[RMDB]
RNA sequence: GGGAACGACUCGAGUAGAGUCGAAAAUGUCUUGGCUUUCAUCUGCCAGACCUCAACCCUCACCCCCAGGAGAUCAGGUCCGGACCAUGAGCUGACCCUGGACUCAGGCAAGGGUGAGUUGGUGCAGCCCUGGCCUGCUGGGAGGCACAGGCUGCAAAUGGUAUACUCCGUUCGCGGAGUAUACCAUAAAAGAAACAACAACAACAAC
Reactivity to DMS in 0.01 (KOAc 150mM, MgCl2 10mM, bicine 150mM(pH8.5), 24C), signal-to-noise 1, nucleotides 027 to 156: u000g000u020c000u020u030g080g110c010u000u000u000c070a150u000c140u000g010c000c010a080g010a040c010c120u000c110a050a160c020c010c010u000c040a100c000c000c300c010c020a150g000g010a130g030a090u010c020a040g010g010u000c030c030g010g040a070c060c030a210u000g010a080g050c100u010g010a090c020c000c010u020g000g010a010c030u000c020a090g000g020c070a120a100g010g060g070u000g010a110g020u000u010g000g030u000g000c030a040g030c010c020c010u020g010g010c000c010u000g010c060u000g030g040g020a160g060g000c040a060c070a010g020g020c000u000g080c010a010a140
Reactivity to 2A3 in 0.01 (KOAc 150mM, MgCl2 10mM, bicine 150mM(pH8.5), 24C), signal-to-noise 2, nucleotides 027 to 156: u150g010u020c040u050u230g010g000c060u110u270u160c140a200u070c110u090g000c000c000a000g000a020c000c020u180c060a080a070c020c000c000u030c000a020c000c010c010c000c010a020g060g020a030g000a240u020c010a020g040g080u020c020c040g110g050a120c130c040a170u210g030a030g060c010u000g030a010c010c000c010u040g010g010a020c030u030c090a050g100g070c110a080a110g040g000g010u000g010a010g000u000u090g040g010u070g000c000a010g000c000c030c000u000g000g000c000c000u020g030c030u080g010g110g130a010g000g020c030a010c000a240g010g030c000u010g000c000a000a050